Conditions: 150 mM KOAc, 10 mM MgCl2 and 150 mM bicine (pH 8.5), 24 C. An RNA of 207 nucleotides, treated with DMS and 2A3 and read out base by base. 2A3 adducts were read by reverse transcription with SuperScript II with manganese.

[RMDB]
RNA sequence: GGGAACGACUCGAGUAGAGUCGAAAAGUAUCCUUCGGGAUACUCAUAGGGGUCGGGAGACGUUCCAGGCUUUUGACGCUCUGAAGCCUCCACGGAGCGAUAAGCCUGGCGACGUCGAAGAACGACGGAGGCACCCAGGUAUGCCUUUCGAGGCAAAAGAUGUGUUCUAGUUCGCUAGAACACAUCUAAAAGAAACAACAACAACAAC
Reactivity to DMS in 0.01 (KOAc 150mM, MgCl2 10mM, bicine 150mM(pH8.5), 24C), signal-to-noise 1, nucleotides 027 to 156: g010u010a000u000c020c020u000u010c270g090g040g000a010u000a000c000u020c030a120u010a280g090g030g050g040u000c020g020g000g000a280g020a040c000g010u000u020c010c020a000g010g000c030u020u020u000u000g020a230c040g050c000u040c000u000g070a060a110g000c020c020u000c010c040a300c020g040g000a000g030c010g000a060u010a040a100g010c020c000u000g020g000c120g000a000c030g010u020c000g030a080a080g030a060a220c030g030a070c020g010g000a060g070g020c020a140c020c040c010a300g030g000u010a100u010g000c000c020u000u010u000c130g000a060g040g030c000a050a100a150
Reactivity to 2A3 in 0.01 (KOAc 150mM, MgCl2 10mM, bicine 150mM(pH8.5), 24C), signal-to-noise 2, nucleotides 027 to 156: g010u010a000u010c000c000u020u050c270g030g010g010a020u000a010c010u000c020a070u300a130g070g050g030g010u040c010g000g000g020a030g010a010c000g000u020u020c000c000a010g010g020c030u080u190u200u250g090a060c040g020c010u020c000u020g040a140a040g010c010c010u090c010c000a020c000g020g010a000g000c000g090a090u090a230a000g000c000c010u000g010g000c060g000a000c000g000u000c000g010a020a000g000a000a000c020g040a000c020g010g020a010g000g050c020a070c010c010c000a040g120g080u210a090u140g000c000c000u060u030u110c180g080a020g000g000c000a020a030a120
Source information
The DMS profile rests on 1,730 reads. Source: RMDB library RNAMAK, as collected in RNAgym.